This 177-nucleotide RNA was probed chemically with DMS and 2A3.
Reactivities are rounded to 0.1 and cut off at 0 and 3.
2A3 adducts were read by reverse transcription with SuperScript II with manganese.
The reactions ran in a buffer of 150 mM KOAc, 10 mM MgCl2 and 150 mM bicine (pH 8.5), at 24 C.

[RMDB]
RNA sequence: GGGAACGACUCGAGUAGAGUCGAAAAAAGUCACGUUCGGUUAUCCUGCGAUUUUUGACGAGGUUCGGCAGGAAUGCCAAAUCAACAAUGCGCAUGUUGUCGCCGGAUGUGGAUCCGGGUAUCAAAGCAAUUAACAUUCCUUCGGGAAUGUUAAUUGAAAAGAAACAACAACAACAAC
Reactivity to DMS in 0.01 (KOAc 150mM, MgCl2 10mM, bicine 150mM(pH8.5), 24C), signal-to-noise 4, nucleotides 027 to 126: a070a090g000u000c010a020c030g030u000u000c020g010g020u000u010a100u000c070c040u000g010c010g010a020u000u000u000u000u000g020a120c240g010a140g010g010u020u010c100g020g000c000a010g000g030a130a060u000g010c000c000a020a040a060u000c030a060a160c010a020a010u000g010c000g010c010a030u000g000u000u010g010u010c220g000c000c000g020g010a000u000g020u010g010g000a060u010c010c010g000g000g000u000a070u010c090a050a180a110g000
Reactivity to 2A3 in 0.01 (KOAc 150mM, MgCl2 10mM, bicine 150mM(pH8.5), 24C), signal-to-noise 2, nucleotides 027 to 126: a000a000g100u040c000a010c000g000u000u010c020g000g000u000u020a050u080c020c000u010g000c010g030a070u100u110u030u060u160g090a070c070g010a110g000g010u100u130c060g030g000c020a000g080g170a020a020u010g010c000c000a010a010a010u010c010a000a090c000a010a020u030g070c010g020c000a010u030g120u210u090g080u180c020g010c000c000g020g010a000u020g000u030g030g010a000u030c030c030g110g050g030u090a080u150c080a080a040a040g050